Structure probing data (DMS and 2A3) for a 177-nucleotide construct. For DMS, 5,689 sequencing reads were counted. The 2A3 profile rests on 2,765 reads.
[RMDB]
RNA sequence: GGGAACGACUCGAGUAGAGUCGAAAAGAAGCCAAUACUAACCAAGAUAGUUAUGGUGGGUCUUCAGUCUGCUUGUACUGUCGUGCACACGUUGAACAUCCUUCUAUGGAUGGUCAUUGUAGAUUAACUCCACUCUGUUAUUCGUAACAGAGUGGAGAAAAGAAACAACAACAACAAC
Reactivity to DMS in 0.01 (KOAc 150mM, MgCl2 10mM, bicine 150mM(pH8.5), 24C), signal-to-noise 6, nucleotides 027 to 126: g000a260a240g000c010c010a020a300u000a080c050u000a030a150c160c140a100a150g010a180u000a030g000u000u000a150u000g010g030u000g010g010g000u000c050u000u000c040a120g010u000c010u000g030c020u000u000g010u000a030c130u010g000u000c030g000u000g010c100a080c060a070c110g030u000u000g000a030a060c000a000u000c000c010u000u030c240u010a080u010g010g000a010u000g000g000u000c020a040u000u000g010u000a060g000a220u000u000a080a220
Reactivity to 2A3 in 0.01 (KOAc 150mM, MgCl2 10mM, bicine 150mM(pH8.5), 24C), signal-to-noise 3, nucleotides 027 to 126: g050a040a000g040c020c020a040a020u080a070c040u030a040a080c020c090a130a040g070a300u110a010g040u100u050a090u070g070g020u000g060g070g060u000c020u020u000c040a080g060u010c010u000g030c030u020u070g040u090a090c050u050g030u060c000g000u040g020c030a040c020a010c110g080u010u070g010a030a010c030a010u020c010c000u220u170c140u250a160u270g000g000a020u000g020g000u000c000a030u020u170g060u110a080g020a080u090u070a060a060